RNA sequence: GGGAACGACUCGAGUAGAGUCGAAAAACAUACUUGGCAUGUCUCAGAACACACCUGAGCGUCUGUGCCUGGGACGGGCCACACUCACUGUCAUCAUGGAGAAGCACGGGUGGCUGAGGCUGGCCAGCACCCCUCGGGGGUUCGCCCCCGAGGGGUGAAAAGAAACAACAACAACAAC
Reactivity to 2A3 in 0.01 (KOAc 150mM, MgCl2 10mM, bicine 150mM(pH8.5), 24C), signal-to-noise 1, nucleotides 027 to 126: a000c060a060u300a080c080u120u120g000g000c030a070u020g030u030c000u010c010a070g100a300a040c100a020c030a000c170c000u000g040a050g060c040g030u000c030u070g160u150g040c000c000u070g060g020g100a010c000g000g050g010c100c030a000c010a000c010u110c000a160c040u060g000u040c040a150u030c020a040u300g080g000a060g040a150a000g010c020a070c030g000g010g010u010g000g070c000u000g000a000g030g000c000u010g080g040c000c000a000g000

Structure probing data (2A3) for a 177-nucleotide construct. Source: RMDB library OK2TRN, as collected in RNAgym.